[RMDB]
RNA sequence: GGGAACGACUCGAGUAGAGUCGAAAAGUCCCCACUUUCGAGUGGGGACAAUCAAAGUUUUGGCACACGCAGCCCGCAGCGUUGGUGCUCCCACGCGGUGCAUAACUGCCUACUUCGGUAGGCAGAACUAAAGUAAGCAAUUCGUUGCUUACUUUAGAAAAGAAACAACAACAACAAC
Reactivity to 2A3 in 0.01 (KOAc 150mM, MgCl2 10mM, bicine 150mM(pH8.5), 24C), signal-to-noise 9, nucleotides 027 to 126: g000u000c000c000c000c000a010c020u090u090u090c240g120a010g000u010g000g000g000g010a000c030a010a020u080c030a010a040a070g040u050u080u190u220g080g000c020a020c000a010c050g030c020a030g040c000c020c020g000c030a060g010c020g050u080u110g060g040u100g030c030u060c000c010c000a060c030g020c030g030g010u040g010c010a050u110a240a100c000u010g000c000c000u000a010c010u020u050c130g080g000u000a000g000g000c000a000g000a000a000
Reactivity to DMS in 0.01 (KOAc 150mM, MgCl2 10mM, bicine 150mM(pH8.5), 24C), signal-to-noise 9, nucleotides 027 to 126: g000u000c000c000c000c000a010c000u000u000u010c160g020a020g050u000g010g000g010g010a000c010a000a040u010c120a080a090a130g010u000u000u010u000g010g010c040a060c070a070c050g010c040a100g000c030c010c030g010c090a080g010c040g010u010u000g020g010u000g010c070u000c030c010c020a120c120g010c030g010g000u000g010c070a090u010a070a180c010u000g010c000c000u000a000c000u000u010c170g010g010u000a010g000g010c000a000g010a030a130